[RMDB]
RNA sequence: GGGAACGACUCGAGUAGAGUCGAAAAGAAGGGUGAAAGCCCUUGAUACUGUAGUGGAAAUUAUAAAUAAGAAGGGUUCUGAGUUGCUUAAGCAGAACUAAAAUAAAAAGACAAGCAUUAUUACAAACAUGGCGAGGUAAGUUCGCUUACCUCGCAACUAAAGUAAUAUCUUCGGAUAUUACUUUAGAAAAGAAACAACAACAACAAC
Reactivity to 2A3 in 0.01 (KOAc 150mM, MgCl2 10mM, bicine 150mM(pH8.5), 24C), signal-to-noise 4, nucleotides 027 to 156: g050a010a000g010g010g020u040g040a110a000a010g020c010c010c000u010u020g020a030u040a070c050u060g050u120a040g030u040g040g050a030a050a060u160u090a090u170a240a120a070u150a100a040g070a040a040g100g000g000u000u010c010u010g030a050g040u100u070g060c020u080u030a090a020g000c010a000g000a000a000c020u030a000a010a010a010u080a000a110a010a010a000g020a030c030a030a000g000c020a010u010u070a050u100u120a180c080a030a130a010c040a100u090g080g000c000g010a000g000g000u000a000a000g000u020u100c210g000c070u000u000a000c000c000u000c000g000c000a000a000
Reactivity to DMS in 0.01 (KOAc 150mM, MgCl2 10mM, bicine 150mM(pH8.5), 24C), signal-to-noise 2, nucleotides 027 to 156: g040a050a020g000g040g060u000g020a160a180a230g000c000c000c010u010u010g020a120u000a170c060u000g010u020a070g030u020g010g000a110a030a060u000u000a080u000a090a110a190u010a110a120g010a080a120g000g000g020u000u000c030u040g010a080g020u000u000g010c080u010u000a070a120g040c020a050g050a030a050c030u000a010a040a060a050u000a070a090a140a090a160g010a120c040a010a080g020c020a030u010u000a050u020u000a060c160a070a060a070c060a080u010g010g000c000g000a020g000g010u000a010a010g000u010u000c300g030c010u000u000a010c010c000u020c010g000c010a020a030